Background
Conditions: 150 mM KOAc, 10 mM MgCl2 and 150 mM bicine (pH 8.5), 24 C. The record gives the reactivity of an RNA of 207 nucleotides to DMS and 2A3. The DMS profile rests on 2,570 reads. Source: RMDB library M2RFPK, as collected in RNAgym. For 2A3, 1,892 sequencing reads were counted.
RNA sequence: GGGAACGACUCGAGUAGAGUCGAAAAUUGCCGAUCAGGCUGUGUUGUGGCGGGGGCGAAACAGGAUCGACAAGGGUGUAAAUAUCGCUCUUUUACUCGGCAUGAUACCACCGUUAUCGGGUCAACAAAAAGAAUAUGUGGUUCGCCACAUAUUCAAGGUAUCUACUCAGUUCGCUGAGUAGAUACCAAAAGAAACAACAACAACAAC
Reactivity to DMS in 0.01 (KOAc 150mM, MgCl2 10mM, bicine 150mM(pH8.5), 24C), signal-to-noise 1, nucleotides 027 to 156: u000u000g020c000c010g030a040u000c040a120g020g000c000u000g030u010g040u000u000g050u000g000g050c000g050g010g020g020g000c030g000a120a080a060c060a140g000g020a110u000c000g000a030c000a060a100g020g010g010u000g030u000a080a050a230u000a100u000c030g000c010u000c010u000u000u000u030a120c040u010c040g010g000c000a140u010g000a150u000a090c020c050a060c010c010g020u000u000a020u010c070g010g040g010u010c080a090a150c120a030a060a080a090a130g020a020a000u000a000u010g020u010g010g010u000u010c300g000c020c010a000c000a020u000a000u000u000c000a090a080
Reactivity to 2A3 in 0.01 (KOAc 150mM, MgCl2 10mM, bicine 150mM(pH8.5), 24C), signal-to-noise 3, nucleotides 027 to 156: u090u050g050c020c000g070a120u110c110a100g020g020c040u020g000u000g010u020u100g070u030g020g070c030g000g000g000g050g000c000g000a020a020a020c070a030g090g000a120u070c030g040a030c010a080a020g020g030g000u020g050u120a020a210a050u200a060u120c000g030c020u070c000u020u050u060u040a140c060u030c020g000g000c010a000u080g000a010u010a030c000c000a000c000c000g040u050u030a030u100c020g010g000g020u000c010a030a010c050a050a100a000a010a000g010a000a000u000a000u020g000u020g000g030u040u090c190g040c080c000a000c000a000u000a000u000u010c000a010a000